Notes:
Structure probing data (2A3 and DMS) for a 177-nucleotide construct.
RNA sequence: GGGAACGACUCGAGUAGAGUCGAAAAGAUAUGGAUUGGAACUACUCGUGAAGAAGCGAAGAACUCGGAAACGAGGGAGCUUUGGAGGCGAGCCAAUCCUAAGUCAAAACGCAUCUUCGGAUGCGAACCUAUCUCCUGUCUUCGGACAGGAGAUAGGAAAAGAAACAACAACAACAAC
Reactivity to 2A3 in 0.01 (KOAc 150mM, MgCl2 10mM, bicine 150mM(pH8.5), 24C), signal-to-noise 2, nucleotides 027 to 126: g040a000u080a040u120g010g010a010u000u000g000g000a050a010c050u130a050c000u290c020g010u110g020a050a080g010a010a000g040c020g150a300a040g030a110a060c010u000c000g010g020a060a020a050c020g000a010g000g000g020a010g000c000u000u010u000g040g050a080g000g300c000g000a000g050c000c000a000a000u000c000c000u000a080a010g050u000c000a020a040a090a090c010g000c010a000u010c000u120u100c290g140g010a010u010g000c000g030a020a010
Reactivity to DMS in 0.01 (KOAc 150mM, MgCl2 10mM, bicine 150mM(pH8.5), 24C), signal-to-noise 1, nucleotides 027 to 126: g020a080u010a280u000g000g000a010u000u000g010g000a050a010c000u030a300c000u000c020g020u000g010a300a240g000a000a010g000c000g000a050a120g000a120a150c000u000c000g040g010a060a060a190c000g000a000g000g000g000a040g000c000u000u000u000g000g000a290g000g000c010g030a010g040c000c000a000a020u020c000c030u000a010a060g000u010c050a060a060a130a150c000g000c000a000u000c000u000u010c260g010g030a050u000g010c020g000a050a060
2A3 adducts were read by reverse transcription with SuperScript II with manganese. DMS adducts were read by reverse transcription with MarathonRT. For 2A3, 2,790 sequencing reads were counted. It was measured as part of the RMDB library TTRDEL.